[RMDB]
This 177-nucleotide RNA was probed chemically with DMS and 2A3. Reactivities are given for positions 27 through 126. Conditions: 150 mM KOAc, 10 mM MgCl2 and 150 mM bicine (pH 8.5), 24 C. High DMS reactivity at an A or C suggests that its Watson-Crick edge is free. 2A3 is a SHAPE reagent: it acylates the 2'-hydroxyl of flexible nucleotides of all four kinds.
RNA sequence: GGGAACGACUCGAGUAGAGUCGAAAACGAGGAGUACAUCAUCCACGAUACAUUACACCAACACAUAUUUGUAAUGUGUCCAGAUGGUCGUAUGUGUUGGUGAUCAUCUGGUGGAUGGUGUAUUCAGGCUUCUCGUUGAUUUCGAUCAAUGAGGAGCAAAAGAAACAACAACAACAAC
Reactivity to DMS in 0.01 (KOAc 150mM, MgCl2 10mM, bicine 150mM(pH8.5), 24C), signal-to-noise 8, nucleotides 027 to 126: c050g020a150g020g010a020g010u000a000c020a010u000c010a000u000c010c000a020c030g000a080u020a070c190a070u020u010a120c010a020c080c040a020a030c040a030c050a020u010a020u000u030u020g020u020a050a050u020g010u020g000u030c150c080a120g010a070u020g010g000u000c070g010u010a020u010g010u000g000u000u000g010g010u000g000a030u010c100a030u010c070u020g010g020u010g000g010a010u000g000g000u000g000u000a000u000u000c030a120g010
Reactivity to 2A3 in 0.01 (KOAc 150mM, MgCl2 10mM, bicine 150mM(pH8.5), 24C), signal-to-noise 9, nucleotides 027 to 126: c070g040a070g180g010a000g000u000a000c000a000u000c000a000u000c000c000a010c020g030a010u050a100c040a040u070u070a020c010a010c010c020a040a010c020a000c010a030u050a040u080u140u120g150u130a130a130u150g070u040g060u100c030c000a080g050a270u180g070g030u020c010g000u020a020u040g020u000g000u000u020g000g010u010g000a010u010c000a000u000c020u110g080g000u010g010g000a000u000g000g000u000g000u000a000u000u000c000a000g050